[RMDB]
RNA sequence: GGGAACGACUCGAGUAGAGUCGAAAACGCCGACUGGUGUAAUCUUAGUCGCUCUUACGCGCCGGCACUACGGCGUGACGAUGUCAUAAGUCGAUGCAUCGCACGUAUCUGCUCCGGAGAGAGACUGUCCUUGAACAACGCGUCCGCGACCUCCUCCGGUCUACUCGGUAUUCGUACCGAGUAGACCAAAAGAAACAACAACAACAAC
Reactivity to 2A3 in 0.01 (KOAc 150mM, MgCl2 10mM, bicine 150mM(pH8.5), 24C), signal-to-noise 2, nucleotides 027 to 156: c010g030c000c010g050a030c080u190g050g050u000g110u090a050a190u030c040u100u130a020g000u000c010g030c020u030c000u050u090a140c050g040c020g060c090c040g000g070c060a000c110u130a030c080g030g010c000g040u000g000a040c020g000a000u050g110u190c110a040u080a230a090g200u220c150g150a070u090g000c000a000u010c020g000c020a000c010g000u020a110u040c030u050g040c000u020c000c000g050g020a000g000a000g010a000g020a090c030u070g120u160c020c050u020u140g050a130a000c030a080a000c080g040c030g070u040c040c020g010c000g020a060c000c000u060c010c010u060c030c020